[RMDB]
RNA sequence: GGGAACGACUCGAGUAGAGUCGAAAACGGGUCGAAAAUCUAGUGAAUCGCCGUAGUGCAGCGUGUUCGUCCGCGUCGCUACGGUUAAAUCAAAUGACAGAACUAAACAUGUAGAACUGGUCGUAGAGUGCUUCUGGACGCGGGUUCGAUUCCCGCCGGACAUGUUAAAGUUCGCUUUAACAUGUCCAAAAGAAACAACAACAACAAC
Reactivity to DMS in 0.01 (KOAc 150mM, MgCl2 10mM, bicine 150mM(pH8.5), 24C), signal-to-noise 3, nucleotides 027 to 156: c060g010g000g010u010c010g000a060a060a080a070u000c040u000a060g000u010g010a140a070u000c120g000c030c020g040u000a070g020u000g020c110a070g010c010g040u000g040u000u000c140g000u000c090c020g040c000g010u010c020g010c010u000a010c010g000g020u000u000a010a050a080u000c070a040a090a140u000g000a120c010a120g030a210a180c030u000a030a050a070c070a050u000g010u010a070g000a060a080c050u000g000g010u000c030g010u000a060g000a060g050u000g000c020u000u000c040u000g030g010a130c080g010c030g000g010g020u000u000c030g000a300u000u000c010c000c000g020c120c130
Reactivity to 2A3 in 0.01 (KOAc 150mM, MgCl2 10mM, bicine 150mM(pH8.5), 24C), signal-to-noise 4, nucleotides 027 to 156: c010g000g020g060u140c050g050a050a010a000a070u060c070u080a050g100u060g100a080a050u080c040g000c000c020g010u000a000g000u010g020c050a010g020c030g000u050g030u040u070c060g050u070c010c010g010c000g050u040c010g000c010u010a000c010g000g010u010u020a000a000a000u080c020a000a030a040u080g010a020c070a100g010a020a010c030u090a090a070a130c070a090u110g060u130a030g030a120a060c040u040g030g010u040c030g040u040a030g020a030g100u070g040c030u070u070c030u040g040g010a030c030g000c000g020g000g010u020u050c010g000a000u030u040c000c010c000g010c000c030

This 207-nucleotide RNA was probed chemically with DMS and 2A3. It was measured as part of the RMDB library ARCHII. The reactions ran in a buffer of 150 mM KOAc, 10 mM MgCl2 and 150 mM bicine (pH 8.5), at 24 C. For DMS the reverse transcriptase was MarathonRT.